[RMDB]
RNA sequence: GGGAACGACUCGAGUAGAGUCGAAAACUCGAAAGAGACCUGCAUAUCUUAAUCAGAUGAACAAGUCACGUCUGAAAAGCGAAAGCCCUAAGAUAUGCAGCUGUGAAGACUUGACGCAGAAAAUAAAAAUUAAUGGUACGUUCGCGUACCAUUAAUUAAAAGAAACAACAACAACAAC
Reactivity to DMS in 0.01 (KOAc 150mM, MgCl2 10mM, bicine 150mM(pH8.5), 24C), signal-to-noise 4, nucleotides 027 to 126: c000u000c010g000a130a140a150g000a010g000a190c170c030u000g010c010a010u000a010u010c000u000u000a030a140u010c040a000g010a010u000g000a090a110c020a030a010g010u000c020a300c040g020u000c000u010g000a040a130a130a180g020c050g020a110a060a070g000c010c230c060u000a020a020g000a020u000a000u000g000c000a020g000c050u000g000u000g000a040a110g010a030c010u000u000g010a240c040g000c030a070g010a120a070a070a070u040a030a050a070
Reactivity to 2A3 in 0.01 (KOAc 150mM, MgCl2 10mM, bicine 150mM(pH8.5), 24C), signal-to-noise 7, nucleotides 027 to 126: c000u000c020g030a010a030a010g110a010g050a150c000c000u000g000c000a000u000a000u020c000u020u020a070a080u110c000a000g000a010u010g020a110a040c010a030a010g010u020c020a010c050g030u000c010u020g130a210a120a080a020g040c040g040a100a020a000g000c030c010c000u010a000a010g000a000u010a000u020g000c000a010g000c010u000g010u010g060a090a040g010a010c000u010u020g010a030c020g000c030a000g210a040a090a020a040u300a030a090a050
An RNA of 177 nucleotides, treated with DMS and 2A3 and read out base by base. For DMS, 6,702 sequencing reads were counted. The RNA was probed in 150 mM KOAc, 10 mM MgCl2 and 150 mM bicine (pH 8.5) at 24 C. For 2A3, 7,294 sequencing reads were counted.